[RMDB]
RNA sequence: GGGAACGACUCGAGUAGAGUCGAAAACGGUAUUUCCCCAGCAGCCAUGACCUACCAGGCUGCGGUGCGGCUCGCCGCACAGGUCAUCCCUCAUCGGGCGCGUCCUGCGUCCUUCCACGCCAACCCAAGACCAUUGCUUCCUUCGGGAAGCAAUGAACACCUUGAUACUCUUCGGAGUAUCAAGGUGAAAAGAAACAACAACAACAAC
Reactivity to 2A3 in 0.01 (KOAc 150mM, MgCl2 10mM, bicine 150mM(pH8.5), 24C), signal-to-noise 1, nucleotides 027 to 156: c010g130g010u100a090u000u040u010c010c010c030c020a030g000c000a000g010c000c000a170u130g010a030c000c010u080a240c050c020a030g000g000c010u000g000c000g040g000u010g000c000g000g030c080u080c230g070c020c000g060c000a000c030a000g000g030u040c010a060u030c040c020c020u130c050a100u080c110g000g000g030c030g000c020g100u160c070c070u120g010c020g050u000c000c040u060u060c040c020a080c080g050c060c030a110a040c050c000c050a070a010g090a100c090c000a000u000u000g000c000u020u010c000c000u000u020c050g000g010g000a000a000g050c000a000a000u000g000a000a000